RNA sequence: GGGAACGACUCGAGUAGAGUCGAAAAGAAUAAGAAUAAGAAGUAUUUAGGGAAUGGCACAGAUUUUAAAUGCGUUAUUUUUCGUUUGCUGUGUAGUUAAAGCAAGGGUUUAACUUAUAAUAGAAAAGGACGAACUAGGGUUCGCCUUAGUUCGUCCAAAAGAAACAACAACAACAAC
Reactivity to DMS in 0.01 (KOAc 150mM, MgCl2 10mM, bicine 150mM(pH8.5), 24C), signal-to-noise 6, nucleotides 027 to 126: g000a080a060u030a060a080g000a110a090u020a070a110g010a100a140g010u010a030u010u010u010a040g000g010g010a060a040u010g000g010c070a040c060a050g010a120u020u020u020u020a020a070a060u000g010c100g010u010u000a050u000u010u000u010u000c040g010u010u010u000g000c020u010g010u000g000u000a040g020u000u010a020a020a050g010c060a080a080g010g010g010u000u000u010a020a030c030u010u020a050u030a060a100u020a100g000a060a060a110a120
Reactivity to 2A3 in 0.01 (KOAc 150mM, MgCl2 10mM, bicine 150mM(pH8.5), 24C), signal-to-noise 6, nucleotides 027 to 126: g050a030a050u240a070a040g080a080a030u190a130a020g060a080a000g060u080a090u090u060u110a050g020g010g040a020a070u050g030g000c020a010c020a050g040a060u040u080u070u160a040a110a020u080g010c030g020u020u040a090u100u070u020u030u060c040g020u040u040u090g020c040u030g000u010g000u050a020g030u010u080a040a020a010g030c080a050a080g030g030g010u020u020u050a000a000c000u020u100a050u050a260a140u100a090g170a030a120a020a020